[RMDB]
RNA sequence: GGGAACGACUCGAGUAGAGUCGAAAACAAAAACAAAAACGAGCAACGGAAACGGCAAAUAACCAGCUAAAGCCGCCGUAAAAGCUCGGGUCAACCGAAAAGAACGGAGACCAAGAAAGCUGGUAAAGCGUCAUCUAGUGUUCGCACUAGAUGACGCAAAAGAAACAACAACAACAAC
Reactivity to 2A3 in 0.01 (KOAc 150mM, MgCl2 10mM, bicine 150mM(pH8.5), 24C), signal-to-noise 1, nucleotides 027 to 126: c010a060a070a000a000a000c170a000a110a000a040a000c030g000a000g000c020a060a000c000g000g070a230a000a170c020g070g000c010a030a030a030u090a000a030c000c000a020g030c000u070a090a030a000g090c000c000g000c000c000g000u020a030a040a040a040g010c000u000c000g000g000g000u000c000a080a300c020c000g010a130a070a100a100g050a000a000c000g000g000a060g020a030c000c000a000a000g120a000a020a000g000c030u000g000g040u080a110a070a000